Chemical mapping of a 177-nucleotide RNA with DMS and 2A3.
For DMS, 1,331 sequencing reads were counted.
Source: RMDB library OK1LIB, as collected in RNAgym.

RNA sequence: GGGAACGACUCGAGUAGAGUCGAAAAGCUGCGGCCGCCGAAGCCUUAGAUGCCUUCGACACCGAAUGGGGACACCGCUACCCAGCGGCAAUUCGAUUGUGGCGCAACGCCUGGAAUGAGUUCAUCCCCCGCCAUAAAUGUUCGCAUUUAUGGCGGGAAAAGAAACAACAACAACAAC
Reactivity to DMS in 0.01 (KOAc 150mM, MgCl2 10mM, bicine 150mM(pH8.5), 24C), signal-to-noise 1, nucleotides 027 to 126: g010c020u030g000c050g020g050c020c000g040c030c000g000a080a120g000c070c110u000u030a230g010a100u010g010c140c050u000u000c010g040a060c180a090c010c040g020a020a050u030g000g000g000g000a100c220a160c110c050g000c000u000a120c030c030c040a110g020c000g000g000c070a110a020u020u000c010g000a030u010u000g050u030g000g000c000g100c090a030a040c080g000c000c000u030g000g000a190a050u010g000a050g000u030u000c110a150u020c140c000
Reactivity to 2A3 in 0.01 (KOAc 150mM, MgCl2 10mM, bicine 150mM(pH8.5), 24C), signal-to-noise 4, nucleotides 027 to 126: g020c030u050g010c010g080g030c070c000g020c010c000g100a070a020g000c000c010u080u080a070g040a200u150g040c000c010u020u030c010g050a040c020a040c020c040g040a060a080u070g000g000g000g050a020c030a020c060c000g000c050u040a100c000c010c030a010g020c010g000g020c040a010a070u070u040c000g090a040u030u120g090u100g110g000c050g020c070a080a040c090g020c000c000u020g030g040a100a120u100g030a050g060u060u080c010a050u030c020c010